[RMDB]
RNA sequence: GGGAACGACUCGAGUAGAGUCGAAAAGGACUCAUUCCUGCGGUUAUGAUUAUGUCUACAACCCUUUCUUUGUCGAUGUUCAACAGUGGGGUUAUGUAGGCAAUCUUGCUACUAAUCACGAUCGUUACCAAUUAAAUACGUUCGCGUAUUUAAUUGGAAAAGAAACAACAACAACAAC
Reactivity to DMS in 0.01 (KOAc 150mM, MgCl2 10mM, bicine 150mM(pH8.5), 24C), signal-to-noise 5, nucleotides 027 to 126: g010g010a110c150u010c110a240u000u000c010c020u000g020c010g010g000u000u000a040u000g000a020u000u000a040u000g020u000c010u000a020c010a040a070c000c000c000u000u000u000c030u000u000u000g010u000c090g000a170u010g010u000u000c030a030a020c120a020g020u000g000g000g000g000u000u010a050u010g030u000a000g010g020c010a020a040u010c110u010u000g020c130u000a090c200u000a010a030u010c020a030c020g010a010u000c000g010u000u000a160
Reactivity to 2A3 in 0.01 (KOAc 150mM, MgCl2 10mM, bicine 150mM(pH8.5), 24C), signal-to-noise 7, nucleotides 027 to 126: g060g030a080c040u030c120a060u040u030c000c010u010g000c010g010g020u020u020a020u050g010a010u010u030a050u130g000u020c000u000a010c010a030a060c010c010c000u030u280u090c020u050u060u040g040u020c060g200a230u210g130u260u120c010a020a020c010a070g010u020g010g030g000g000u040u050a090u140g000u000a000g000g000c000a000a010u020c020u020u110g070c010u030a070c020u020a010a020u010c010a000c050g020a020u020c000g020u010u050a100